Source: RMDB library M2RFOK, as collected in RNAgym. The record gives the reactivity of an RNA of 207 nucleotides to DMS and 2A3. Values cover nucleotides 27 to 156. For 2A3, 3,260 sequencing reads were counted. DMS adducts were read by reverse transcription with MarathonRT.
RNA sequence: GGGAACGACUCGAGUAGAGUCGAAAAAUCAGAGGGCGCUAUCAUGCAAACUAGGAUUGUCUGCUCAUGCACAGAACCAACUACCCAUAACUAACAGUGCAUGAAGGUUAGUUAUUCCAUAUUAAUUAAAACUCGUAAUUCUUCGGAAUUACGAGAACAGUUGUCUUUUGUUCGCAAAAGACAACUGAAAAGAAACAACAACAACAAC
Reactivity to DMS in 0.01 (KOAc 150mM, MgCl2 10mM, bicine 150mM(pH8.5), 24C), signal-to-noise 2, nucleotides 027 to 156: a080u010c050a090g010a150g010g020g000c190g000c060u000a110u000c060a090u000g000c050a130a170a120c020u000a160g010g040a080u000u000g000u010c040u010g000c010u020c030a040u000g000c020a050c070a080g010a010a080c050c030a070a120c110u010a090c030c030c020a070u010a050a070c070u000a050a050c030a090g000u000g000c010a000u010g000a090a130g000g000u000u000a050g000u000u010a050u000u010c070c030a050u000a110u000u000a050a110u040u010a070a060a100a130c000u000c000g000u000a010a020u000u000c010u000u000c300g020g000a000a010u000u020a000c000g020a000g020a010a050
Reactivity to 2A3 in 0.01 (KOAc 150mM, MgCl2 10mM, bicine 150mM(pH8.5), 24C), signal-to-noise 5, nucleotides 027 to 156: a000u040c030a040g020a050g040g020g000c030g010c040u070a110u300c090a090u300g010c020a030a010a050c020u040a030g010g040a040u030u040g050u040c050u050g020c010u000c020a010u010g000c020a010c010a020g040a110a080c050c020a050a050c030u170a190c020c040c010a020u010a030a010c010u000a010a000c020a030g040u010g070c000a000u010g030a020a010g080g000u010u010a010g000u020u000a040u130u040c050c000a050u140a050u250u170a150a070u170u130a060a090a050a090c000u010c000g000u000a000a000u000u000c010u020u040c120g070g010a000a000u000u000a000c000g000a000g000a000a000